An RNA of 207 nucleotides, treated with 2A3 and read out base by base.

RNA sequence: GGGAACGACUCGAGUAGAGUCGAAAAACGCGGAGUACGCUCCGCGACAACACUUCUUUCGACCAGCUAACCGAGACCUAUGGGUCGUUAAAUUACGUCUCUAUCUUACUCACAUAACAUCGCACAAAAAACGUGGUUCGGUUCGCCGAACCACGAAGUUGUUGUUUGAGUUCGCUCAAACAACAACAAAAGAAACAACAACAACAAC
Reactivity to 2A3 in 0.01 (KOAc 150mM, MgCl2 10mM, bicine 150mM(pH8.5), 24C), signal-to-noise 2, nucleotides 027 to 156: a000c000g000c000g000g000a010g010u050a010c090g020c090u030c000c000g040c010g050a000c010a010a110c030a040c060u130u060c020u040u110u040c020g000a010c010c000a060g100c050u020a100a030c040c020g040a020g030a060c010c020u050a110u160g030g000g000u020c000g040u020u060a110a050a040u210u100a020c070g010u000c010u000c020u010a060u070c070u040u100a100c010u040c100a060c020a150u170a140a030c020a070u150c060g090c110a030c090a080a040a010a080a080a060c050g000u010g010g000u000u000c010g000g050u030u060c160g050c080c000g000a000a000c010c000a000c000g000a000a000

2A3 is a SHAPE reagent: it acylates the 2'-hydroxyl of flexible nucleotides of all four kinds. Reactivities are given for positions 27 through 156. 2A3 adducts were read by reverse transcription with SuperScript II with manganese.